[RMDB]
The data come from the RNA Mapping Database (RMDB), library OK2TST. This 177-nucleotide RNA was probed chemically with 2A3 and DMS. Values cover nucleotides 27 to 126. 2A3 adducts were read by reverse transcription with SuperScript II with manganese. For DMS the reverse transcriptase was MarathonRT.

RNA sequence: GGGAACGACUCGAGUAGAGUCGAAAACAUCAACGAACGCCAAGAUCUCAACACAUUUCUGCUGAUUGCCCGUCUAGACAAGGACUAAUAACCAAGCUCACAGAUCUCGAUUCGGUUAUCAAGAUCCUCACACGGAAGUAUUCGUACUUCCGUGUGAAAAAGAAACAACAACAACAAC
Reactivity to 2A3 in 0.01 (KOAc 150mM, MgCl2 10mM, bicine 150mM(pH8.5), 24C), signal-to-noise 2, nucleotides 027 to 126: c010a040u140c060a000a050c050g100a070a030c050g010c050c010a060a050g050a090u040c030u010c020a020a090c060a010c020a080u050u070u070c030u010g000c010u040g040a060u080u050g000c020c010c020g050u030c040u050a100g010a090c030a080a040g020g000a000c000u040a070a070u070a080a020c010c020a030a030g010c010u010c020a060c010a070g110a110u010c040u010c070g020a030u020u060c040g040g080u060u030a090u080c020a020a030g040a110u040c000c010
Reactivity to DMS in 0.01 (KOAc 150mM, MgCl2 10mM, bicine 150mM(pH8.5), 24C), signal-to-noise 2, nucleotides 027 to 126: c050a030u030c090a090a080c060g020a080a070c130g020c040c040a080a100g000a080u010c040u000c020a090a090c090a080c070a080u010u000u020c060u010g030c050u000g030a060u000u000g010c020c010c050g040u000c060u000a070g010a030c120a060a060g000g000a040c020u000a060a060u000a040a070c050c040a040a100g000c040u010c070a120c140a090g000a050u000c010u000c060g010a060u010u000c130g000g000u000u000a080u010c040a040a120g030a070u000c030c060
Values are in units of 0.01, from 0 to 300, in steps of 10. For DMS, 1,538 sequencing reads were counted.